Annotation:
Source: RMDB library M2PK50, as collected in RNAgym. Chemical mapping of a 177-nucleotide RNA with DMS and 2A3. The DMS profile rests on 22,903 reads. The RNA was probed in 150 mM KOAc, 10 mM MgCl2 and 150 mM bicine (pH 8.5) at 24 C. DMS adducts were read by reverse transcription with MarathonRT.
[RMDB]
RNA sequence: GGGAACGACUCGAGUAGAGUCGAAAAACCUCAGUCUUCGGACUGAGGUGAGCGGAGCAUGGUGGCCGUGGGAACUCGUCCUUGGUGACAAGGGCCCACGGGGUGCGGCACGCUUCGGCGUGCCGAAAGUUAAGUAGUACUUCGGUACUACUUAACUAAAAGAAACAACAACAACAAC
Reactivity to DMS in 0.01 (KOAc 150mM, MgCl2 10mM, bicine 150mM(pH8.5), 24C), signal-to-noise 5, nucleotides 027 to 126: a030c000c000u000c000a010g000u000c000u000u010c210g020g000a020c000u000g000a000g010g010u000g000a040g010c080g010g000a110g010c060a070u010g010g010u010g010g010c020c010g020u000g010g000g000a020a010c010u000c040g000u000c000c010u010u010g020g010u010g010a020c000a010a010g000g000g010c000c010c000a010c010g000g000g000g010u010g010c000g010g000c000a010c000g020c000u000u000c130g020g010c010g000u000g000c000c000g000a010a020
Reactivity to 2A3 in 0.01 (KOAc 150mM, MgCl2 10mM, bicine 150mM(pH8.5), 24C), signal-to-noise 4, nucleotides 027 to 126: a000c000c000u000c000a000g010u000c000u020u170c230g160g000a000c010u000g000a010g000g000u010g000a020g000c060g030g030a050g050c080a100u120g030g090u110g100g100c010c000g020u000g000g000g010a030a020c010u010c030g010u000c020c010u170u300g150g040u300g020a000c020a020a000g010g010g020c000c000c000a000c010g000g000g010g010u100g010c010g020g000c020a000c000g000c000u010u030c150g100g000c000g010u000g010c020c010g020a020a020